[RMDB]
RNA sequence: GGGAACGACUCGAGUAGAGUCGAAAAUCGUCUUCGGACGACGCCGCACCUUUGUGAGAGACGAAUAAUCAGGGAGAACGAACGGACCCAUUGGGUCCGGGAGUUCGAAGAACUGAUUACUAUCUCUCACUCUGGUCUGAGCCAGUUUCGACUGGAAAGCUUAACUUUGUUUCGACAAAGUUAAGCUAAAAGAAACAACAACAACAAC
Reactivity to 2A3 in 0.01 (KOAc 150mM, MgCl2 10mM, bicine 150mM(pH8.5), 24C), signal-to-noise 3, nucleotides 027 to 156: u030c000g000u000c010u040u040c290g150g000a000c000g000a010c010g070c030c040g060c020a010c010c000u010u010u010g010u010g000a000g000a000g000a000c070g090a300a300u010a020a000u000c000a000g000g010g010a020g000a000a000c000g010a010a000c000g000g010a010c010c020c130a240u200u300g040g000g000u020c000c000g000g010g000a010g000u010u010c000g000a000a000g000a000a010c000u000g010a000u010u010a000c000u020a010u000c000u000c000u000c000a000c010u000c000u000g000g000u020c080u080g070a050g010c010c000a000g010u000u070u250c170g080a050c010u020g020g000a160a070
Reactivity to DMS in 0.01 (KOAc 150mM, MgCl2 10mM, bicine 150mM(pH8.5), 24C), signal-to-noise 1, nucleotides 027 to 156: u000c010g040u000c000u000u010c300g000g000a040c020g020a010c050g000c040c060g030c080a030c000c000u000u000u020g000u000g000a060g020a020g040a080c060g040a090a030u000a000a040u000c000a000g000g000g010a260g020a050a020c010g000a300a300c000g000g000a020c000c010c010a300u000u000g000g030g060u000c010c010g000g020g010a300g000u000u000c000g020a070a100g010a130a290c020u000g000a020u000u000a010c040u000a120u000c000u000c010u000c000a040c010u010c010u000g000g000u000c080u000g000a220g040c050c010a080g020u000u000u000c110g010a140c020u000g000g000a070a150

This 207-nucleotide RNA was probed chemically with 2A3 and DMS. Conditions: 150 mM KOAc, 10 mM MgCl2 and 150 mM bicine (pH 8.5), 24 C. The 2A3 profile rests on 2,437 reads.